[RMDB]
The record gives the reactivity of an RNA of 177 nucleotides to DMS and 2A3. Conditions: 150 mM KOAc, 10 mM MgCl2 and 150 mM bicine (pH 8.5), 24 C. For DMS the reverse transcriptase was MarathonRT.
RNA sequence: GGGAACGACUCGAGUAGAGUCGAAAAGAAAUCCUUCAAAGAGUAUAAGGGUAAAAGCUAGCUUGACUGUGUUUCAGCCAAUAGGGAACGCAGAUGCGAAAGCAGGGCCUAACGAACCACCUAGUUCUUCGGAAGCAUUCUUCGGAAUGCUUCCGAAAAAAGAAACAACAACAACAAC
Reactivity to DMS in 0.01 (KOAc 150mM, MgCl2 10mM, bicine 150mM(pH8.5), 24C), signal-to-noise 1, nucleotides 027 to 126: g000a060a020a140u000c010c000u000u000c130a140a080a100g120a100g030u020a090u020a030a020g060g000g000u050a010a120a060a190g000c000u000a050g000c000u000u000g000a130c030u010g010u000g000u000u000u000c200a150g060c150c230a100a120u060a090g000g010g000a000a000c010g000c000a140g010a050u000g000c050g010a100a030a070g050c000a070g050g000g000c030c020u010a100a030c180g000a030a190c000c030a090c030c000u050a100g000u000u000c040
Reactivity to 2A3 in 0.01 (KOAc 150mM, MgCl2 10mM, bicine 150mM(pH8.5), 24C), signal-to-noise 1, nucleotides 027 to 126: g110a000a050a010u040c000c000u120u060c070a030a080a070g110a000g000u140a000u010a260a070g000g020g000u000a040a040a040a040g030c000u010a030g000c000u070u040g170a070c000u000g100u000g000u030u060u130c050a110g040c110c080a240a080u300a300g140g000g000a000a000c000g050c000a000g000a280u110g030c050g000a000a000a000g010c030a000g000g000g000c000c030u050a100a100c070g000a000a000c000c000a000c040c050u010a010g010u010u010c000